[RMDB]
RNA sequence: GGGAACGACUCGAGUAGAGUCGAAAAGAAUUACCGUACCUAUUUAGGUUUACGCUCCAAGAUCGGUGGAUAGCAGCCCUAUCAAUAUCUAGGAGAACUGUGCUAUGUUUAGAAGAUUAGGUAGUCUAUUACACAGCCAUGUUCGCAUGGCUGUGAAUGUAUAGUAGCGUUUCGACGCUACUAUACAAAAAGAAACAACAACAACAAC
Reactivity to 2A3 in 0.01 (KOAc 150mM, MgCl2 10mM, bicine 150mM(pH8.5), 24C), signal-to-noise 3, nucleotides 027 to 156: g040a020a070u130u010a030c020c020g020u050a020c010c030u060a170u180u180u210a080g020g030u090u090u040a020c050g010c020u020c020c010a040a020g020a020u060c080g080g090u080g060g060a030u010a010g050c100a020g030c060c020c000u040a040u070c030a060a030u040a020u130c030u040a010g010g010a010g010a030a020c040u050g020u010g060c010u040a020u110g080u060u070u050a090g030a200a010g000a110u060u060a020g070g000u020a020g030u030c050u040a130u100u120a060c000a000c000a010g000c010c000a000u010g010u030u050c120g000c120a000u010g000g030c010u000g000u000g000a010a000
Reactivity to DMS in 0.01 (KOAc 150mM, MgCl2 10mM, bicine 150mM(pH8.5), 24C), signal-to-noise 3, nucleotides 027 to 156: g010a100a120u010u000a100c040c020g000u000a080c020c020u000a150u000u000u000a060g000g010u010u000u000a060c080g010c030u000c020c020a070a090g000a050u000c140g040g030u000g030g020a100u010a060g020c050a230g000c170c170c020u000a140u000c030a120a120u010a090u000c040u000a160g000g000a080g020a060a050c060u000g000u000g010c030u000a070u000g050u000u000u000a110g020a100a150g010a080u000u000a100g030g010u000a040g000u000c030u010a060u000u000a210c010a020c000a010g010c010c000a010u000g020u000u010c290g050c030a030u000g000g010c010u000g000u000g000a020a040